[RMDB]
RNA sequence: GGGAACGACUCGAGUAGAGUCGAAAAGUGGUAUCCAGAAUUCUCGUCAGGAGGACUGGUGUGGUGAUACACGUUGGCGUCCGAAACCAGGCGCAUGUACGAUUGCCGAGAAGUAUCUGGGAUCAAGAUCAUGGAAGCCGGUAGUUCCUUCUGGAUGCAGCACAGAUAAGUUCGCUUAUCUGUGCUGAAAAGAAACAACAACAACAAC
Reactivity to 2A3 in 0.01 (KOAc 150mM, MgCl2 10mM, bicine 150mM(pH8.5), 24C), signal-to-noise 2, nucleotides 027 to 156: g110u090g040g030u090a040u050c000c000a000g040a030a040u010u030c010u020c010g060u070c030a030g000g130a020g000g040a030c010u120g100g000u040g000u030g020g120u110g040a090u060a090c000a000c100g030u100u100g110g020c010g020u090c000c040g180a120a070a130c090c050a020g010g000c010g000c010a050u080g030u060a010c000g000a030u000u140g030c030c010g010a010g030a070a000g040u090a090u080c010u010g000g030g000a010u110c040a010a010g020a070u050c010a070u090g120g000a070a000g020c020c040g000g010u060a030g010u030u010c000c000u010u030c000u000g040g020a020u020g000
Reactivity to DMS in 0.01 (KOAc 150mM, MgCl2 10mM, bicine 150mM(pH8.5), 24C), signal-to-noise 2, nucleotides 027 to 156: g020u010g010g010u010a090u010c010c000a030g000a120a150u010u020c040u000c030g000u010c030a080g020g000a250g000g000a100c050u010g040g000u000g020u000g000g050u010g030a250u000a130c040a060c060g010u000u010g040g030c050g000u000c000c020g020a100a130a090c070c060a050g010g000c020g020c030a040u010g000u000a040c000g020a230u010u010g010c000c010g010a140g000a060a130g000u000a080u000c020u000g020g000g000a060u000c080a090a070g010a070u000c040a130u000g000g000a130a190g040c010c020g000g030u010a090g000u000u000c010c010u000u000c040u000g050g030a180u010g000
Description:
The record gives the reactivity of an RNA of 207 nucleotides to 2A3 and DMS. The 2A3 profile rests on 1,058 reads. The DMS profile rests on 2,747 reads. The reactions ran in a buffer of 150 mM KOAc, 10 mM MgCl2 and 150 mM bicine (pH 8.5), at 24 C.